[RMDB]
RNA sequence: GGGAACGACUCGAGUAGAGUCGAAAAAUGCUGCGGGACCGCUGGAGCCUGGUGGCCGAGCGGCGGCGGCAGGCCGGGAUCGCCGGACACACCUACCUCCAGGCGAGCGAAAAAUUCAAAAUGUGGGGCUUGUAGACACAUUCGUGUGUCUACAAGCAAAAGAAACAACAACAACAAC
Reactivity to DMS in 0.01 (KOAc 150mM, MgCl2 10mM, bicine 150mM(pH8.5), 24C), signal-to-noise 2, nucleotides 027 to 126: a050u010g020c000u020g000c040g020g000g000a100c040c040g020c010u000g000g000a040g070c030c050u000g000g020u000g030g020c030c000g000a040g000c030g000g070c000g000g000c070g000g010c090a000g000g020c000c030g020g010g000a090u020c020g000c030c010g000g000a070c040a030c070a180c000c010u000a300c200c100u030c010c000a080g030g000c030g000a110g030c060g000a000a060a090a070a060u000u040c120a000a080a070a030u050g030u000g020g010g020
Reactivity to 2A3 in 0.01 (KOAc 150mM, MgCl2 10mM, bicine 150mM(pH8.5), 24C), signal-to-noise 3, nucleotides 027 to 126: a020u090g030c010u020g000c010g060g040g150a160c000c020g020c050u050g090g040a030g040c040c060u080g090g040u120g050g000c000c000g040a070g030c000g020g000c020g010g000c010g040g110c030a080g140g000c000c000g010g050g070a140u110c000g000c000c000g010g010a010c040a000c010a000c090c000u010a020c000c010u000c010c000a050g040g020c010g000a020g020c000g100a120a050a000a020a010u200u150c050a040a050a040a150u180g040u080g030g010g050
This 177-nucleotide RNA was probed chemically with DMS and 2A3. For 2A3, 2,229 sequencing reads were counted. Values cover nucleotides 27 to 126. Reactivities are rounded to 0.1 and cut off at 0 and 3. DMS adducts were read by reverse transcription with MarathonRT. Conditions: 150 mM KOAc, 10 mM MgCl2 and 150 mM bicine (pH 8.5), 24 C.